[RMDB]
RNA sequence: GGGAACGACUCGAGUAGAGUCGAAAAGUACGUAGAUGUCGCUAGCGGUACUACUGAUCCAUGGACUCAUAUCACAGACGUACACUAUACUAGUGAUCCAUGAGUGGAUCGACUAGGACCAUGUGCCUCGUGUACGUCGUUUCGACGACGUACACGAAAAAGAAACAACAACAACAAC
Reactivity to 2A3 in 0.01 (KOAc 150mM, MgCl2 10mM, bicine 150mM(pH8.5), 24C), signal-to-noise 3, nucleotides 027 to 126: g030u010a010c030g020u080a030g040a270u140g060u040c040g000c210u050a050g080c030g050g000u040a100c020u050a050c030u070g030a060u000c020c010a040u050g060g000a060c010u000c160a070u070a030u220c010a030c020a080g060a080c030g010u020a010c080a060c040u070a060u020a170c010u020a000g010u000g030a010u000c020c020a030u040g020a020g160u040g000g000a000u000c010g080a050c010u020a010g000g000a010c050c010a030u050g000u040g090c000c050
Reactivity to DMS in 0.01 (KOAc 150mM, MgCl2 10mM, bicine 150mM(pH8.5), 24C), signal-to-noise 2, nucleotides 027 to 126: g050u010a030c100g060u010a050g020a080u010g000u000c020g030c060u000a060g020c050g010g020u000a070c040u010a110c090u000g010a070u000c080c030a130u020g020g010a130c060u000c000a030u010a110u000c080a040c100a050g000a060c130g010u000a060c100a100c200u000a100u000a090c010u000a020g000u000g000a020u000c050c100a070u000g000a120g010u000g010g000a000u000c030g000a010c050u000a020g060g000a090c080c100a080u010g010u000g010c100c060